This 177-nucleotide RNA was probed chemically with DMS and 2A3. Conditions: 150 mM KOAc, 10 mM MgCl2 and 150 mM bicine (pH 8.5), 24 C. DMS (dimethyl sulfate) methylates the pairing face of unpaired adenines and cytosines. 2A3 adducts were read by reverse transcription with SuperScript II with manganese. It was measured as part of the RMDB library OK2TRN.

RNA sequence: GGGAACGACUCGAGUAGAGUCGAAAACAUUAGUCUUAAACUGGCCUGGAGAUUUUUAUCAUGGAGUGGUCAGGAAAACUUCCAUGCAAUGUUUUGGUGAGCAAAGCUGCUGAUUGAUGAAACAUCAUGUCAUGUAUUUUUUCGAAAAUACAUGACAAAAAGAAACAACAACAACAAC
Reactivity to DMS in 0.01 (KOAc 150mM, MgCl2 10mM, bicine 150mM(pH8.5), 24C), signal-to-noise 7, nucleotides 027 to 126: c050a070u010u000a090g000u000c030u010u010a060a090a150c050u010g010g010c020c020u000g010g010a150g010a040u000u010u010u010u010a070u010c040a080u010g010g020a120g030u000g010g010u010c060a090g010g000a060a050a080a060c070u000u000c020c040a050u000g000c100a060a060u010g010u000u000u000u000g010g020u000g000a070g010c080a040a060a100g010c050u000g010c050u000g000a070u000u000g000a050u000g000a140a080a080c110a050u000c110a100
Reactivity to 2A3 in 0.01 (KOAc 150mM, MgCl2 10mM, bicine 150mM(pH8.5), 24C), signal-to-noise 3, nucleotides 027 to 126: c010a050u110u130a030g040u030c030u090u160a150a120a090c030u010g020g030c020c020u040g170g050a090g030a110u060u120u070u120u300a090u140c030a030u090g050g030a030g100u080g000g040u050c020a040g010g050a030a080a000a020c020u100u000c010c010a020u040g000c020a060a130u040g010u010u050u030u010g000g010u060g020a010g010c010a020a060a060g020c030u040g000c000u010g050a090u050u040g020a020u010g030a140a050a070c020a040u080c030a050